[RMDB]
RNA sequence: GGGAACGACUCGAGUAGAGUCGAAAAGAAAGUAAGAAAGCGGUUGGGUGGGUCCAUCGACCGUCGUGGCGUAUUCGGACGCUUUACCACGACGCGAGGAAAUAGCGAGACCGACCACCCCCUUUAACAGAGGUAUAGUAGUUCGCUACUAUACCAACACUCUAGGAGACUUCGGUCUCCUAGAGUGAAAAGAAACAACAACAACAAC
Reactivity to 2A3 in 0.01 (KOAc 150mM, MgCl2 10mM, bicine 150mM(pH8.5), 24C), signal-to-noise 2, nucleotides 027 to 156: g040a040a070a010g030u120a030a040g020a180a100a020g080c120g050g090u130u120g080g000g010u040g050g060g000u020c050c030a170u130c010g020a020c020c030g000u000c000g000u000g000g000c070g010u090a190u130u180c150g080g040a040c010g010c000u110u100u080a060c030c000a000c010g000a000c000g000c030g030a030g020g070a130a040a050u080a060g020c030g030a040g010a090c000c020g000a020c020c010a020c030c000c000c000c000u030u100u030a120a110c150a050g040a010g130g000u000a000u000a000g000u000a000g020u010u030c170g040c070u000a000c010u000a000u000a000c000c000a000a000
Reactivity to DMS in 0.01 (KOAc 150mM, MgCl2 10mM, bicine 150mM(pH8.5), 24C), signal-to-noise 1, nucleotides 027 to 156: g010a100a040a150g000u000a090a090g000a120a050a130g050c120g010g030u010u010g010g030g060u000g060g020g000u000c000c020a090u000c150g020a080c070c040g010u000c010g020u020g000g040c020g000u010a070u000u000c060g020g000a140c020g010c030u020u000u000a050c010c000a070c000g020a020c000g000c020g000a160g050g000a030a080a110u000a040g030c030g020a130g020a030c000c010g070a030c000c010a010c010c020c040c010c000u000u000u000a090a200c130a130g020a180g020g030u000a000u010a010g030u000a020g000u010u020c290g040c020u000a020c010u000a020u000a000c000c010a090a110